[RMDB]
RNA sequence: GGGAACGACUCGAGUAGAGUCGAAAACAACGCCUUAAACUUUGAUCGUGGGUUGCUGACUUGUAAUGAAGAUAGUAAACUCGUUUUGUACGACUGCGCUUCAAGAAGAAUGCAAAUGAAAAACCGCCCGUGCUAAUAGAUUCGUCUAUUAGCACGGAAAAGAAACAACAACAACAAC
Reactivity to 2A3 in 0.01 (KOAc 150mM, MgCl2 10mM, bicine 150mM(pH8.5), 24C), signal-to-noise 3, nucleotides 027 to 126: c000a020a020c030g040c020c020u160u170a150a160a100c070u100u100u150g060a040u150c020g020u050g000g050g010u030u040g000c040u020g040a050c010u050u050g060u150a090a100u120g020a010a020g050a130u150a060g060u060a040a140a090c030u020c030g010u040u060u060u220g090u050a010c030g010a000c030u030g000c000g030c020u000u000c020a050a060g040a030a000g030a040a020u040g010c000a010a030a260u140g060a160a050a020a010a050c000c020g040c010
Reactivity to DMS in 0.01 (KOAc 150mM, MgCl2 10mM, bicine 150mM(pH8.5), 24C), signal-to-noise 3, nucleotides 027 to 126: c070a090a100c140g020c020c040u000u010a080a120a130c050u010u000u010g010a100u000c070g020u010g000g010g020u000u000g020c010u000g010a280c040u000u000g020u010a050a130u000g000a040a050g010a070u000a070g020u010a030a040a120c140u000c010g000u000u000u010u010g010u010a020c010g020a040c070u000g020c040g000c030u000u000c010a040a060g000a090a050g020a040a100u000g020c010a010a050a060u000g000a060a060a050a120a140c060c120g020c200